[RMDB]
RNA sequence: GGGAACGACUCGAGUAGAGUCGAAAAGGAGGACGAAGCAUAUUUCUGUUUCUGGAGGAUUAUUUAUAAUCUGCCGGAAAGUCUUGCAGGUGGCUGGGAUAUGUUCAGUCUGGUAGAAUUGAGCACGAAAACGUGUCCUUGUUCGCAAGGACACGAAGAGAUGAUGUAUCUUCGGAUACAUCAUCUCAAAAGAAACAACAACAACAAC
Reactivity to 2A3 in 0.01 (KOAc 150mM, MgCl2 10mM, bicine 150mM(pH8.5), 24C), signal-to-noise 4, nucleotides 027 to 156: g070g010a030g000g010a000c020g020a040a000g010c030a020u030a060u050u120u080c060u090g140u030u040u000c000u000g030g020a040g020g000a000u010u020a010u010u190u040a080u060a030a030u010c000u030g090c010c000g010g020a030a010a020g030u040c040u130u150g030c040a040g040g090u060g030g020c040u060g040g000g000a020u040a010u060g070u090u050c060a010g010u000c030u030g040g030u060a020g080a100a090u060u120g030a040g040c070a020c130g050a020a020a040a060c010g000u000g000u000c000c000u020u010g010u020u070c100g000c120a000a000g000g000a010c000a000c000g000a010a000
Reactivity to DMS in 0.01 (KOAc 150mM, MgCl2 10mM, bicine 150mM(pH8.5), 24C), signal-to-noise 2, nucleotides 027 to 156: g020g010a170g000g000a060c050g020a090a160g020c050a050u000a030u000u010u010c030u000g010u000u000u000c000u010g030g020a060g020g000a030u000u010a030u010u010u010a060u000a060a020u000c000u000g000c000c010g010g010a020a040a050g000u000c040u000u000g020c060a080g010g020u000g000g020c050u020g000g000g010a080u000a030u000g000u000u000c070a160g000u000c020u000g020g000u000a100g010a090a080u010u000g000a090g020c040a070c050g000a070a060a090a130c030g020u000g020u000c000c000u000u000g010u000u010c300g020c020a030a010g000g000a000c000a010c010g000a010a060